RNA sequence: GGGAACGACUCGAGUAGAGUCGAAAACGGGGACCACGAGCACCGCGAGCAGGAUGAUCCCGAGGUAGGUGGGCAGCGAACCGACCUGCACCCGACCGGUCACCCCGACGGCCAACCGUUCCAGCGAUCCCAUGAUCCGCUCGUAACCGCGCUGGGCGUCCAGAAUCACUUUCGAGUGAUUCUGGACAAAAGAAACAACAACAACAAC
Reactivity to 2A3 in 0.01 (KOAc 150mM, MgCl2 10mM, bicine 150mM(pH8.5), 24C), signal-to-noise 1, nucleotides 027 to 156: c040g000g000g020g070a050c030c060a010c060g050a040g050c060a020c050c050g150c090g050a040g010c090a070g050g040a070u090g040a030u050c000c050c050g000a010g020g000u100a020g040g010u100g060g020g020c080a130g030c030g000a070a020c020c010g010a010c040c000u020g000c020a020c030c020c000g050a040c000c000g000g070u020c000a060c000c000c000c020g040a080c030g010g000c000c090a100a060c120c040g050u180u070c000c000a000g000c000g020a090u050c000c000c020a000u040g060a130u050c040c040g000c040u000c000g090u080a070a110c060c020g010c000g000c000u040g010g040g000c090

An RNA of 207 nucleotides, treated with 2A3 and read out base by base.
The 2A3 profile rests on 671 reads.
2A3 adducts were read by reverse transcription with SuperScript II with manganese.